[RMDB]
RNA sequence: GGGAACGACUCGAGUAGAGUCGAAAACAUACGCUUAACCAGCCGUUGAUUGCGGAUGUGCGUGCGCGUCUGCAACCGCAGCAGAAAUACAUUCGUGGCCUGUUCUGCGGCGGCACGCUGUGCGACGCAGCGCGCCGCAUUUCGAUGCGGCGCGCUGAAAAGAAACAACAACAACAAC
Reactivity to 2A3 in 0.01 (KOAc 150mM, MgCl2 10mM, bicine 150mM(pH8.5), 24C), signal-to-noise 2, nucleotides 027 to 126: c010a050u250a070c050g020c030u160u070a080a030c020c030a030g040c070c020g030u090u120g120a160u060u100g010c000g040g020a050u050g040u040g050c040g080u070g060c020g000c010g030u020c060u030g000c000a030a030c000c000g030c000a000g000c000a010g040a030a120a020u210a030c050a080u080u260c150g050u110g000g050c010c030u060g030u130u040c000u000g000c000g040g010c010g040g000c050a000c090g040c070u080g010u050g040c020g040a040c030g000
Reactivity to DMS in 0.01 (KOAc 150mM, MgCl2 10mM, bicine 150mM(pH8.5), 24C), signal-to-noise 2, nucleotides 027 to 126: c060a060u000a070c100g010c050u000u020a130a120c130c060a120g000c050c080g000u010u000g000a100u010u010g010c010g010g000a040u000g020u010g030c030g010u000g020c020g010c010g010u000c030u000g020c020a070a120c000c010g030c030a030g000c000a030g000a050a050a140u010a090c120a160u000u000c160g040u010g000g020c200c070u000g000u000u010c020u010g010c000g000g040c220g000g000c060a040c090g010c040u010g040u010g010c050g000a080c130g030
Description:
The record gives the reactivity of an RNA of 177 nucleotides to 2A3 and DMS. It was measured as part of the RMDB library OK2TST. The reactions ran in a buffer of 150 mM KOAc, 10 mM MgCl2 and 150 mM bicine (pH 8.5), at 24 C. For DMS, 1,990 sequencing reads were counted. For DMS the reverse transcriptase was MarathonRT. Reactivities are rounded to 0.1 and cut off at 0 and 3. For 2A3 the reverse transcriptase was SuperScript II with manganese.